RNA sequence: GGGAACGACUCGAGUAGAGUCGAAAAUUUGCGUUCGCGCAAAAGGCAACCUUUGUGUUAUAAUUUGCACAUGGAGUAUUUCGAUACCCAUUGGGUAUUUCGAUACUAUGAAGUGUGCGGUUUGUAACACUCUGGUCUCGGGCUACUUCGGUAGCAAUUAGGAAGAUGACUUCGGUCAUCUUCCUAAAAAAGAAACAACAACAACAAC
Reactivity to 2A3 in 0.01 (KOAc 150mM, MgCl2 10mM, bicine 150mM(pH8.5), 24C), signal-to-noise 2, nucleotides 027 to 156: u020u000u010g000c000g020u020u110c300g080c010g000c100a000a020a010a060g210g020c060a120a000c000c000u000u000u030g000u010g000u000u000a010u000a000a070u000u010u270g010c010a000c000a010u040g000g030a040g020u010a000u010u080u020c030g000a000u000a010c010c030c170a260u210u300g030g010g020u030a050u100u140u020c020g000a000u020a090c050u010a180u120g050a050a010g000u000g060u000g020c020g000g000u030u030u030g000u010a000a000c000a000c000u030c000u000g060g010u050c050u070c100g110g110g030c000u120a000c000u090u030c240g110g010u010a010g020c020a010a110

The data come from the RNA Mapping Database (RMDB), library RNAMAK. Chemical mapping of a 207-nucleotide RNA with 2A3. For 2A3, 798 sequencing reads were counted. The RNA was probed in 150 mM KOAc, 10 mM MgCl2 and 150 mM bicine (pH 8.5) at 24 C. High 2A3 reactivity points to a flexible backbone, as in loops and unpaired stretches.